[RMDB]
RNA sequence: GGGAACGACUCGAGUAGAGUCGAAAACUAUGCCUUUGAAACACCGGCAGUUGCAUUGAAUGGUGUUUUGCAUGCUGUUAAGCGUUGCAGUGCAAAAUCUUUAGAUGUUCCAUGUGAAGAGGGUGCAGCUGAGUUUAAUGUUUUUGAGGGUGGUGUCAUUGACUGUGACAUUCGUGUCACAGUCAAUAAAAGAAACAACAACAACAAC
Reactivity to DMS in 0.01 (KOAc 150mM, MgCl2 10mM, bicine 150mM(pH8.5), 24C), signal-to-noise 1, nucleotides 027 to 156: c050u000a080u010g010c040c020u020u000u000g000a070a050a080c020a050c010c000g010g040c000a080g020u000u010g040c000a080u010u020g020a080a140u000g000g030u020g010u000u000u000u000g020c030a090u000g010c020u010g040u000u000a100a100g040c050g030u000u000g020c020a120g020u010g030c020a020a070a090a040u010c020u000u000u000a140g030a080u000g010u000u010c020c020a160u000g000u010g020a060a120g020a140g020g020g010u000g000c000a060g000c030u000g000a110g000u000u000u000a050a080u010g000u040u000u000u000u020g020a090g050g030g010u010g020g020u010g000u000c040
Reactivity to 2A3 in 0.01 (KOAc 150mM, MgCl2 10mM, bicine 150mM(pH8.5), 24C), signal-to-noise 3, nucleotides 027 to 156: c040u070a070u140g090c000c030u040u050u150g040a010a030a000c040a010c020c060g160g000c020a040g000u020u060g050c040a050u010u100g060a100a120u060g010g000u010g070u060u020u030u000g020c000a040u070g050c000u010g010u270u140a180a030g110c100g100u110u100g000c030a020g010u030g060c010a020a010a010a060u040c060u090u180u180a120g010a120u090g040u090u060c040c010a070u090g070u070g120a050a020g020a030g050g000g000u020g000c000a010g010c000u000g010a000g020u070u070u090a110a040u050g050u040u040u050u020u080g040a050g000g030g010u040g010g000u060g010u050c030